[RMDB]
RNA sequence: GGGAACGACUCGAGUAGAGUCGAAAACGGCGCGCGCGAACGUCGAUGCGCUGCGCGCGUCGGGAUGCAUGCUGGGCCUCACGUAUUACGCGUCGGUCGCCGCCGACAUCGACGCCGAGCGCGGCGACCCGCAGGGUCCGUUCGCGGACCCUGCGGGAAAAGAAACAACAACAACAAC
Reactivity to DMS in 0.01 (KOAc 150mM, MgCl2 10mM, bicine 150mM(pH8.5), 24C), signal-to-noise 2, nucleotides 027 to 126: c010g010g010c000g000c000g010c010g010c010g020a070a100c060g010u010c070g000a080u020g030c020g060c100u000g000c050g000c000g000c000g000u010c000g010g000g010a120u000g030c060a080u010g010c080u020g000g010g010c020c060u020c070a060c070g010u000a090u000u010a080c140g020c070g010u000c060g020g000u000c010g030c030c020g010c020c060g020a080c040a050u010c010g020a040c040g020c150c070g000a100g010c090g000c000g000g030c010g010a050
Reactivity to 2A3 in 0.01 (KOAc 150mM, MgCl2 10mM, bicine 150mM(pH8.5), 24C), signal-to-noise 1, nucleotides 027 to 126: c020g030g040c030g000c020g020c000g020c050g080a120a060c000g030u020c040g030a050u070g000c100g020c090u090g030c000g020c000g000c020g000u000c000g010g030g010a040u050g000c050a030u070g010c030u110g020g020g080c000c030u130c040a060c070g120u090a110u150u280a100c150g020c030g030u050c030g050g010u010c010g000c000c020g010c000c030g030a050c020a030u080c040g000a020c020g000c090c080g070a030g010c100g000c010g000g000c000g080a000
This 177-nucleotide RNA was probed chemically with DMS and 2A3.
DMS adducts were read by reverse transcription with MarathonRT.
For 2A3 the reverse transcriptase was SuperScript II with manganese.
For DMS, 1,987 sequencing reads were counted.